[RMDB]
RNA sequence: GGGAACGACUCGAGUAGAGUCGAAAACAGGUUUUCGAACCUGAUGAAUCCUAAGUCGAAGCAAUGACGUCCCAUCAGGCGAAGAACUAUCGGAAACGAUAGGGAGCCUGUGGGAUAAGACAGCUUCGAUAUGGAGAGCGACGCUGUUCGCAGCGAAUUAAGGGGACAGUUUCGACUGUCCCCUUAAAAAAGAAACAACAACAACAAC
Reactivity to DMS in 0.01 (KOAc 150mM, MgCl2 10mM, bicine 150mM(pH8.5), 24C), signal-to-noise 1, nucleotides 027 to 156: c010a010g040g040u000u000u000u000c280g050a010a040c000c000u020g000a100u000g000a280a180u000c000c000u000a080a270g040u000c000g040a000a020g070c020a290a110u030g000a210c100g000u000c000c010c020a040u000c050a020g040g020c010g020a130a230g070a100a170c000u000a050u000c020g010g000a230a090a240c020g000a030u000a030g000g000g040a300g030c000c000u000g070u000g000g020g030a030u000a020a120g000a070c040a080g020c000u000u000c000g070a040u000a130u010g000g020a020g000a170g040c070g000a190c000g020c000u000g010u000u000c190g000c050a090g000c020g020a090a210
Reactivity to 2A3 in 0.01 (KOAc 150mM, MgCl2 10mM, bicine 150mM(pH8.5), 24C), signal-to-noise 1, nucleotides 027 to 156: c000a010g030g000u050u070u090u270c200g080a010a010c000c000u000g000a000u100g050a030a070u060c010c000u020a110a030g050u000c000g020a000a000g000c090a170a210u100g010a050c030g030u000c040c010c000a150u300c120a030g020g000c020g100a220a010g020a030a050c010u000a000u000c010g010g120a050a050a080c040g000a010u000a000g000g020g000a000g000c010c000u000g010u010g000g000g020a000u010a000a000g020a030c020a040g100c000u000u000c000g010a000u010a010u060g010g040a000g020a030g020c080g070a020c000g020c090u110g080u200u130c120g050c060a010g030c020g110a060a130
An RNA of 207 nucleotides, treated with DMS and 2A3 and read out base by base. 2A3 adducts were read by reverse transcription with SuperScript II with manganese. For 2A3, 715 sequencing reads were counted. The data come from the RNA Mapping Database (RMDB), library RNAMAK. Conditions: 150 mM KOAc, 10 mM MgCl2 and 150 mM bicine (pH 8.5), 24 C. Reactivities are given for positions 27 through 156.